[RMDB]
RNA sequence: GGGAACGACUCGAGUAGAGUCGAAAAGAUAUGGAAGGAACUACUCGGACCGUAGGCGUUGAAAUCGGAAACGAUGGAGCCUAUUAGUACGAGCCUUCCUAAGUCAAAAUCCUGGUUCGCCAGGAAAUCUUUACUAUGGCUUCGGCCAUAGUAAAGAAAAAGAAACAACAACAACAAC
Reactivity to DMS in 0.01 (KOAc 150mM, MgCl2 10mM, bicine 150mM(pH8.5), 24C), signal-to-noise 1, nucleotides 027 to 126: g020a000u000a300u020g000g000a020a010g000g010a070a020c020u030a300c000u000c020g010g000a030c140c150g000u000a000g000g030c000g000u000u020g000a050a160a030u000c000g000g010a090a060a290c000g000a000u010g000g000a080g000c000c000u000a020u000u010a070g000u000a030c000g010a020g000c020c030u010u000c000c000u000a000a090g000u000c030a140a070a120a090u000c000c000u000g000g000u000u000c170g020c000c000a020g000g010a000a020a040